[RMDB]
RNA sequence: GGGAACGACUCGAGUAGAGUCGAAAAAAGUACUCUCGGUCACCGAGCAGUUCCAGACGACGCCACAGCACGGGGUUGUCGGCGGACUGGGUGAAAUGGCAGCCGAUAGCGGCUAGCUGUCGGCUGCGAUUCGAAAAGGAUUCGUCCUUUUCGAAUCAAAAGAAACAACAACAACAAC
Reactivity to DMS in 0.01 (KOAc 150mM, MgCl2 10mM, bicine 150mM(pH8.5), 24C), signal-to-noise 6, nucleotides 027 to 126: a090a050g020u020a080c100u000c020u000c020g000g020u000c040a030c010c000g010a100g020c070a010g000u020u000c000c010a200g000a070c020g010a020c010g010c010c010a110c100a170g020c260a170c170g010g000g000g030u010u010g020u000c000g000g000c180g000g000a020c010u000g000g010g010u020g020a040a050a060u050g010g010c000a000g000c000c010g000a010u000a000g010c000g020g020c230u060a070g020c000u000g000u000c010g000g000c000u000g010c000
Reactivity to 2A3 in 0.01 (KOAc 150mM, MgCl2 10mM, bicine 150mM(pH8.5), 24C), signal-to-noise 9, nucleotides 027 to 126: a010a000g110u100a060c020u020c010u020c030g080g020u050c020a020c030c010g020a060g090c010a010g000u070u050c010c000a030g010a050c010g010a000c010g140c060c010a120c050a110g140c090a070c210g020g010g010g000u070u170g010u020c010g010g020c090g010g000a010c000u020g000g020g020u020g040a050a060a060u130g110g000c000a000g000c010c000g000a000u000a000g010c010g150g150c170u080a060g000c000u000g000u000c000g000g000c000u000g000c000
Source information: An RNA of 177 nucleotides, treated with DMS and 2A3 and read out base by base. For 2A3 the reverse transcriptase was SuperScript II with manganese. In probing experiments dimethyl sulfate is read out at A N1 and C N3, which are open when not base-paired. Values cover nucleotides 27 to 126. High 2A3 reactivity points to a flexible backbone, as in loops and unpaired stretches.